[RMDB]
Source: RMDB library OK1LIB, as collected in RNAgym. The record gives the reactivity of an RNA of 177 nucleotides to 2A3 and DMS. The reactions ran in a buffer of 150 mM KOAc, 10 mM MgCl2 and 150 mM bicine (pH 8.5), at 24 C. For 2A3, 1,475 sequencing reads were counted. Values are in units of 0.01, from 0 to 300, in steps of 10.

RNA sequence: GGGAACGACUCGAGUAGAGUCGAAAAAGCGAUGCCGGGAAGGCCAUUUCGUUUGCUACCACAUUGGGAGUGAACAAGUGCCACGUACAGAUCAUGGACCUCGGGCACAUGUGUGACGCCACCAUGACACUGUGCCCCCUUUCGAGGGGGCACAGUGAAAAGAAACAACAACAACAAC
Reactivity to 2A3 in 0.01 (KOAc 150mM, MgCl2 10mM, bicine 150mM(pH8.5), 24C), signal-to-noise 3, nucleotides 027 to 126: a000g050c060g080a010u120g000c020c010g000g000g020a160a000g030g000c040c010a060u020u030u080c040g000u000u060u000g010c000u100a200c000c000a170c020a220u100u300g060g000g000a020g020u010g000a040a010c000a050a000g020u020g000c000c030a080c060g010u120a050c000a060g010a060u020c010a030u070g060g000a070c050c040u050c000g010g010g020c010a020c030a150u100g150u000g000u050g150a020c060g050c000c000a020c010c030a050u060g010a000
Reactivity to DMS in 0.01 (KOAc 150mM, MgCl2 10mM, bicine 150mM(pH8.5), 24C), signal-to-noise 1, nucleotides 027 to 126: a090g000c090g000a120u000g000c020c050g000g030g000a130a080g000g000c060c080a000u050u000u000c120g000u000u040u010g010c040u020a070c000c000a140c300a140u000u040g000g000g000a040g000u010g020a000a000c000a020a100g000u000g000c010c000a110c170g090u000a110c200a040g000a000u020c030a030u000g000g000a030c050c010u030c130g010g000g000c020a030c010a070u010g040u030g000u010g000a150c000g000c000c020a110c000c020a030u000g000a120